[RMDB]
Source: RMDB library TTRDES, as collected in RNAgym. An RNA of 177 nucleotides, treated with DMS and 2A3 and read out base by base. The DMS profile rests on 1,517 reads. Reactivities are given for positions 27 through 126. The 2A3 profile rests on 2,721 reads. The RNA was probed in 150 mM KOAc, 10 mM MgCl2 and 150 mM bicine (pH 8.5) at 24 C.
RNA sequence: GGGAACGACUCGAGUAGAGUCGAAAAGAUAUGGACUCGGUGGACAGCGAGGAUCAACUAUCGGAAACGAUAGUUGGGAGCUGCCACACGAGUCCUAAGUCAAAAGCCAUGAGUUCGCUCAUGGCAACAGCUGUAUCACGUUCGCGUGAUACAGCUGAAAAGAAACAACAACAACAAC
Reactivity to DMS in 0.01 (KOAc 150mM, MgCl2 10mM, bicine 150mM(pH8.5), 24C), signal-to-noise 2, nucleotides 027 to 126: g010a060u000a300u000g000g010a000c000u000c000g000g040u000g000g000a180c100a040g010c000g000a110g020g020a040u010c020a000a030c000u000a000u000c000g050g010a080a080a160c000g000a000u000a000g000u000u000g000g000g000a010g040c000u000g020c000c000a030c010a060c010g000a010g030u010c000c000u000a010a060g010u000c050a130a110a130a190g020c000c000a010u000g010a010g070u000u030c300g000c000u000c000a000u000g010g050c000a010a040
Reactivity to 2A3 in 0.01 (KOAc 150mM, MgCl2 10mM, bicine 150mM(pH8.5), 24C), signal-to-noise 1, nucleotides 027 to 126: g020a020u050a010u090g020g000a000c000u010c060g060g000u050g000g050a200c050a010g000c010g060a300g000g040a010u020c000a000a000c000u010a010u020c000g000g050a020a010a010c000g000a010u000a010g000u000u000g000g010g000a020g010c000u050g080c000c000a040c010a020c020g020a010g000u000c000c000u000a000a010g010u010c010a000a030a040a130g000c010c000a000u010g000a000g050u130u220c300g110c160u010c020a000u030g000g000c000a000a000